[RMDB]
RNA sequence: GGGAACGACUCGAGUAGAGUCGAAAAUUUCGCAGUAGCUGCCUAAUCGCACUCUGCAUCGCCUAACAGCAUUUCCUAUGUGCUGUUAACGCGAUUCAACCUUAAUAGGAUAUGCUAAACACUGCCGUUUGAAGUCUGUUUAGAAGAAACUUAAUCAACCUCGUAUGAUGUUCGCAUCAUACGAGGUAAAAGAAACAACAACAACAAC
Reactivity to DMS in 0.01 (KOAc 150mM, MgCl2 10mM, bicine 150mM(pH8.5), 24C), signal-to-noise 2, nucleotides 027 to 156: u000u000u010c140g030c000a070g030u010a060g070c120u010g030c000c010u010a180a150u000c210g060c000a070c000u000c000u000g020c000a190u000c020g040c030c040u010a020a050c000a020g010c010a040u000u000u000c020c030u010a010u000g010u000g020c000u000g060u000u000a030a030c060g020c000g000a060u000u000c060a140a140c040c060u010u000a090a060u000a030g010g000a030u000a300u020g050c010u000a040a010a030c010a060c020u000g020c030c050g000u000u010u000g000a080a070g000u000c160u020g030u000u000u010a060g000a070a080g000a220a030a100c080u000u000a100a050u000c060a190
Reactivity to 2A3 in 0.01 (KOAc 150mM, MgCl2 10mM, bicine 150mM(pH8.5), 24C), signal-to-noise 6, nucleotides 027 to 156: u130u120u080c050g000c000a020g020u300a010g040c170u030g010c020c030u160a130a110u180c050g000c000a000c000u000c000u000g000c000a010u010c010g000c000c000u000a000a000c000a000g000c000a000u090u020u000c000c000u000a000u000g000u000g000c000u000g000u000u000a020a020c020g000c000g040a010u170u190c050a080a130c030c040u140u290a020a010u000a000g000g000a000u000a010u020g000c000u010a010a000a000c010a000c010u010g010c020c130g150u040u060u130g010a010a000g010u030c060u050g000u040u000u000a010g000a020a000g020a040a220a040c090u190u210a090a120u170c040a020

The record gives the reactivity of an RNA of 207 nucleotides to DMS and 2A3. The reactions ran in a buffer of 150 mM KOAc, 10 mM MgCl2 and 150 mM bicine (pH 8.5), at 24 C.